Source: RMDB library OK2TRN, as collected in RNAgym. Chemical mapping of a 177-nucleotide RNA with DMS.
RNA sequence: GGGAACGACUCGAGUAGAGUCGAAAACACACUGAUGUAAGAUGCUUUUGACUAGGAUGCUAUUCAGGCACAGGGCCUCAACAGGCUAGAGUUGGGCUGGCCUAGAAGGGUACAAUGGAAUCCUAUAACCAAGAAAUGGAUUCGUCCAUUUCUUGGUAAAAGAAACAACAACAACAAC
Reactivity to DMS in 0.01 (KOAc 150mM, MgCl2 10mM, bicine 150mM(pH8.5), 24C), signal-to-noise 7, nucleotides 027 to 126: c050a080c100a070c080u010g000a090u000g010u000a050a070g000a100u000g000c050u000u000u000u000g010a110c150u010a040g010g010a080u010g010c020u000a050u000u000c090a060g010g020c030a080c090a120g000g000g010c040c000u010c040a040a130c110a070g000g010c050u000a030g000a100g000u000u010g000g000g010c030u000g000g000c010c010u000a040g010a100a090g000g010g010u010a040c110a050a060u000g010g010a070a060u000c010c000u000a070u010a140

Conditions: 150 mM KOAc, 10 mM MgCl2 and 150 mM bicine (pH 8.5), 24 C.